[RMDB]
RNA sequence: GGGAACGACUCGAGUAGAGUCGAAAAACCUUGUGGUUCCUGUGGGUCACCCCGCCCCACGGAAUAAUAAAAGCAGAGGAGUAGAGAGUACUCACCUGUCGUCGGUAGAGAGUACUCACCUGUCUUCGGUUAUAGAAGGGUUCGCCCUUCUAUAACCAAAAGAAACAACAACAACAAC
Reactivity to DMS in 0.01 (KOAc 150mM, MgCl2 10mM, bicine 150mM(pH8.5), 24C), signal-to-noise 2, nucleotides 027 to 126: a060c000c020u000u010g010u000g010g010u000u000c020c010u010g120u000g000g000g020u000c030a240c030c000c010c030g000c260c010c000c000a010c010g020g010a050a050u010a120a040u010a020a090a070a080g020c090a070g000a080g000g000a070g020u000a060g000a180g000a020g000u000a000c000u000c000a080c090c010u000g010u010c160g000u010c200g020g000u000a080g010a170g020a000g000u000a000c010u010c020a060c140c010u010g000u000c060u000u000c300
Reactivity to 2A3 in 0.01 (KOAc 150mM, MgCl2 10mM, bicine 150mM(pH8.5), 24C), signal-to-noise 1, nucleotides 027 to 126: a030c030c000u010u100g160u060g060g070u000u020c010c030u090g030u050g010g000g000u070c000a090c060c000c010c000g030c030c010c000c000a000c010g020g010a020a030u120a050a000u050a010a110a020a030g030c070a020g040a040g110g010a040g120u220a000g110a030g000a000g080u010a010c020u040c010a070c000c000u130g090u230c070g070u080c080g040g050u090a060g040a010g000a020g170u010a000c000u000c010a090c030c000u050g080u080c010u000u040c040

Structure probing data (DMS and 2A3) for a 177-nucleotide construct. It was measured as part of the RMDB library VIROID. The 2A3 profile rests on 823 reads. DMS adducts were read by reverse transcription with MarathonRT. Values cover nucleotides 27 to 126. Reactivities are rounded to 0.1 and cut off at 0 and 3.